RNA sequence: GGGAACGACUCGAGUAGAGUCGAAAAGAUAUGGAACUUGGGAACUACGAGGCACAGAUUCGGAAACGAAUCUGUGUCUCGCCCACGGGUUCCUAAGUCAAAAGGCAGAAUGUUCGCAUUCUGCCAAGAAUUCAGAAAGGUUCGCCUUUCUGAAUUCAAAAGAAACAACAACAACAAC
Reactivity to DMS in 0.01 (KOAc 150mM, MgCl2 10mM, bicine 150mM(pH8.5), 24C), signal-to-noise 3, nucleotides 027 to 126: g000a140u010a300u010g020g010a050a000c000u000u000g000g040g000a110a030c080u010a190c060g000a030g010g020c010a000c010a020g000a000u000u000c000g030g000a150a080a210c020g020a010a010u010c000u000g000u020g020u000c000u000c010g010c100c080c030a140c300g020g010g000u010u000c000c000u000a040a050g010u000c040a090a100a120a120g000g020c000a010g000a010a000u000g010u000u010c300g010c000a020u000u010c000u000g000c000c000a030a030